[RMDB]
RNA sequence: GGGAACGACUCGAGUAGAGUCGAAAAAACGGCCGCGCGGCGAUCAACGGCGAUUUCGUCAUGACCGCCGCCGAGGUCCAAGACGUCGUCCAAGCACUGCGCGGCGGCGGAAUCGACAUCGUCGCCAGGAGGUAUACCAAUUCGUUGGUAUACCUCCAAAAGAAACAACAACAACAAC
Reactivity to DMS in 0.01 (KOAc 150mM, MgCl2 10mM, bicine 150mM(pH8.5), 24C), signal-to-noise 3, nucleotides 027 to 126: a100a040c200g010g020c030c000g070c110g030c030g010g010c040g020a020u010c030a110a150c130g000g020c010g010a220u020u000u030c050g000u010c040a110u000g000a200c050c000g010c010c010g000c050c000g050a010g000g010u020c000c090a140a070g000a160c070g000u010c080g020u010c030c040a120a140g010c200a050c050u000g000c150g070c100g010g000c030g050g030c040g020g000a190a060u000c190g030a040c080a080u010c040g020u000c010g000c040c010a110
Reactivity to 2A3 in 0.01 (KOAc 150mM, MgCl2 10mM, bicine 150mM(pH8.5), 24C), signal-to-noise 6, nucleotides 027 to 126: a000a000c040g050g000c030c000g030c020g000c020g020g000c000g010a040u060c030a050a080c050g020g010c020g030a070u080u130u220c040g020u010c040a040u090g080a100c000c010g000c000c000g000c000c000g010a000g000g000u030c010c010a070a040g050a040c030g100u070c040g010u000c050c010a080a050g050c060a050c150u130g030c080g000c010g090g000c000g000g000c000g010g030a020a050u120c030g010a010c020a040u040c010g010u010c010g000c020c000a020